This 177-nucleotide RNA was probed chemically with DMS and 2A3. It was measured as part of the RMDB library OK2TST. For 2A3 the reverse transcriptase was SuperScript II with manganese. The RNA was probed in 150 mM KOAc, 10 mM MgCl2 and 150 mM bicine (pH 8.5) at 24 C.
[RMDB]
RNA sequence: GGGAACGACUCGAGUAGAGUCGAAAACGUUGCCUCACCUGGGAAGCGCAAGGGGUUGAGGAACUCCCUCCUCUAGCCAAGGCAAGCCAUGAAGGACUGUGCCGUGAGGGACGGUGCUAUCUGACCCCAGGAAAGCAACAUUCGUGUUGCUUUCCUGAAAAGAAACAACAACAACAAC
Reactivity to DMS in 0.01 (KOAc 150mM, MgCl2 10mM, bicine 150mM(pH8.5), 24C), signal-to-noise 4, nucleotides 027 to 126: c150g010u000u000g000c020c020u000c040a080c040c070u000g010g010g010a120a100g040c160g030c090a080a150g010g010g010g010u000u000g010a040g020g000a040a070c170u000c020c010c020u000c030c010u000c030u000a130g030c020c060a120a120g010g000c090a100a090g000c020c020a080u020g020a120a110g010g000a060c020u000g010u010g010c010c040g020u000g000a050g020g000g020a050c030g000g000u000g010c030u010a110u010c060u000g000a130c020c000c010
Reactivity to 2A3 in 0.01 (KOAc 150mM, MgCl2 10mM, bicine 150mM(pH8.5), 24C), signal-to-noise 3, nucleotides 027 to 126: c030g030u020u100g300c000c000u000c010a040c000c040u110g070g080g050a160a060g100c070g020c160a080a070g020g000g020g030u080u120g040a100g030g060a040a060c060u120c020c000c010u010c010c000u000c000u030a030g030c030c010a060a030g010g000c030a020a020g010c010c020a120u190g120a110a090g030g050a110c050u110g060u080g150c000c000g020u050g020a030g030g000g000a000c010g000g050u040g010c030u070a160u040c030u030g090a060c000c000c000